[RMDB]
RNA sequence: GGGAACGACUCGAGUAGAGUCGAAAAGCUGGCGCCGGCUGGGCAACAUUCCGAGGGGACCGUCCCCUCGGUAAUGGCGAAUGGGACCCAGAAAUCUCUCUAGAUUCCGAUAGAGAAUCGAGAGAAACAUUGUAGAUGACUUCGGUCAUCUACAAUGAAAAGAAACAACAACAACAAC
Reactivity to DMS in 0.01 (KOAc 150mM, MgCl2 10mM, bicine 150mM(pH8.5), 24C), signal-to-noise 2, nucleotides 027 to 126: g020c040u000g000g000c070g020c000c060g030g020c020u010g000g010g020c020a120a120c020a060u010u000c010c000g010a020g000g010g000g000a210c220c290g000u000c000c000c000c000u020c000g000g020u000a000a000u000g010g030c110g000a120a060u000g020g000g000a100c020c010c010a120g000a070a120a120u000c000u000c000u000c000u000a180g010a000u000u010c000c030g020a200u000a100g000a140g000a010a000u000c010g000a030g000a000g000a070a060a150
Reactivity to 2A3 in 0.01 (KOAc 150mM, MgCl2 10mM, bicine 150mM(pH8.5), 24C), signal-to-noise 1, nucleotides 027 to 126: g030c010u010g060g020c040g080c050c030g030g040c030u000g080g010g010c010a030a020c000a030u020u000c000c000g000a000g000g000g040g010a050c030c050g300u270c040c010c020c000u020c000g000g010u000a000a000u010g010g010c050g080a020a030u060g010g000g040a020c000c000c000a000g050a070a070a040u020c010u030c000u020c000u030a050g000a040u020u010c000c000g090a180u160a170g170a040g000a020a000u010c000g000a000g010a010g000a040a010a000

Conditions: 150 mM KOAc, 10 mM MgCl2 and 150 mM bicine (pH 8.5), 24 C. Structure probing data (DMS and 2A3) for a 177-nucleotide construct. Values cover nucleotides 27 to 126. The data come from the RNA Mapping Database (RMDB), library 15KREP.